[RMDB]
RNA sequence: GGGAACGACUCGAGUAGAGUCGAAAACGACGUAGUUUCGACUACGUCGACAGGGUAACGAGCCAAGUGGCGCCGACCACUUAAAAACACCGGAAAAUAAAAGAGCCCGUACUUUCGAGUACGGGAAGACAUAGCCAUAUUUCGAUAUGGCUAUGUCAAAAGAAACAACAACAACAAC
Reactivity to DMS in 0.01 (KOAc 150mM, MgCl2 10mM, bicine 150mM(pH8.5), 24C), signal-to-noise 2, nucleotides 027 to 126: c020g010a010c000g010u000a050g010u000u000u020c160g000a010c000u000a000c000g030u000c000g000a060c110a110g000g020g000u050a090a120c220g020a180g010c010c030a090a020g020u010g000g010c000g000c030c010g000a110c010c000a020c000u000u000a000a000a000a000a040c150a010c030c000g000g000a040a160a110a170u000a070a060a240a210g050a240g010c000c000c010g000u000a020c000u000u000u020c180g010a020g000u000a010c010g000g010g010a010a020
The record gives the reactivity of an RNA of 177 nucleotides to DMS. Conditions: 150 mM KOAc, 10 mM MgCl2 and 150 mM bicine (pH 8.5), 24 C. For DMS the reverse transcriptase was MarathonRT. The DMS profile rests on 984 reads. The data come from the RNA Mapping Database (RMDB), library M2PK50.